This 177-nucleotide RNA was probed chemically with 2A3 and DMS.

[RMDB]
RNA sequence: GGGAACGACUCGAGUAGAGUCGAAAAUUGCAGCCGGAAUAUUGGUUUAUUUGUUUUCCAGAAAGGUUGCAUCGUGACUGCGAAGUUUGAAUAAACUAACUUCCGCUUAGCUUACCUUUUUAUGAUGGCUAUUAGGGCUAUUCGUAGCCCUAAUAGCAAAAGAAACAACAACAACAAC
Reactivity to 2A3 in 0.01 (KOAc 150mM, MgCl2 10mM, bicine 150mM(pH8.5), 24C), signal-to-noise 5, nucleotides 027 to 126: u100u030g000c010a000g010c020c030g060g080a090a060u160a190u140u070g020g000u020u030u010a110u000u050u090g040u030u040u060u010c000c000a000g110a020a050a000g050g000u030u050g000c000a010u030c020g030u050g050a060c060u080g010c030g030a000a000g000u020u030u050g130a080a070u160a130a100a010c040u010a000a000c010u030u000c080c030g000c000u050u180a020g000c010u020u080a080c000c000u090u060u060u060u080a210u280g210a060u180g150
Reactivity to DMS in 0.01 (KOAc 150mM, MgCl2 10mM, bicine 150mM(pH8.5), 24C), signal-to-noise 2, nucleotides 027 to 126: u020u030g040c000a030g000c050c010g000g040a070a100u010a120u020u000g000g010u000u010u010a010u030u000u000g010u020u010u000u010c000c000a030g000a060a110a120g000g020u020u000g000c070a050u030c160g010u010g000a170c300u030g000c070g020a030a020g000u000u000u010g010a100a140u020a030a120a080c030u000a000a030c150u000u000c050c030g000c010u010u000a170g020c010u000u030a160c000c000u000u050u040u000u040a110u020g030a120u030g000
For 2A3 the reverse transcriptase was SuperScript II with manganese.